Source: RMDB library OK2TRN, as collected in RNAgym. Chemical mapping of a 177-nucleotide RNA with DMS and 2A3. DMS adducts were read by reverse transcription with MarathonRT.

RNA sequence: GGGAACGACUCGAGUAGAGUCGAAAAGUAGAAAUACAUGGCUCUGAACUGCAUGUGAAGGCUACUCAAUGGAGUCAACAGCCAGGCUGAAUGCAUGGGAAAAAGACUAGUUUAAAAAAUAGCUCAACCGUACAGACUAUUUCGAUAGUCUGUACGGAAAAGAAACAACAACAACAAC
Reactivity to DMS in 0.01 (KOAc 150mM, MgCl2 10mM, bicine 150mM(pH8.5), 24C), signal-to-noise 2, nucleotides 027 to 126: g000u000a040g000a060a070a120u010a020c020a100u010g020g030c000u010c070u000g060a110a150c130u010g020c030a020u000g010u000g030a080a120g000g000c030u010a030c040u040c110a200a060u000g010g010a080g000u020c010a040a080c120a120g000c050c030a040g040g010c020u000g000a090a060u000g010c030a020u030g000g000g010a040a090a040a150a050g010a050c020u000a060g010u000u000u000a000a050a100a020a090a050u000a040g000c040u030c050a020a190
Reactivity to 2A3 in 0.01 (KOAc 150mM, MgCl2 10mM, bicine 150mM(pH8.5), 24C), signal-to-noise 1, nucleotides 027 to 126: g000u020a010g020a080a070a040u080a060c030a080u110g150g000c030u000c060u100g070a130a080c070u130g010c040a030u060g010u000g130a100a050g070g000c020u000a010c020u020c050a160a180u150g160g040a020g030u000c050a040a020c060a130g040c000c010a000g010g000c000u030g170a110a090u140g000c000a000u010g000g030g100a030a070a000a220a000g010a060c010u020a030g120u100u170u240a090a170a030a020a030a050u060a010g020c010u010c040a010a060

Conditions: 150 mM KOAc, 10 mM MgCl2 and 150 mM bicine (pH 8.5), 24 C.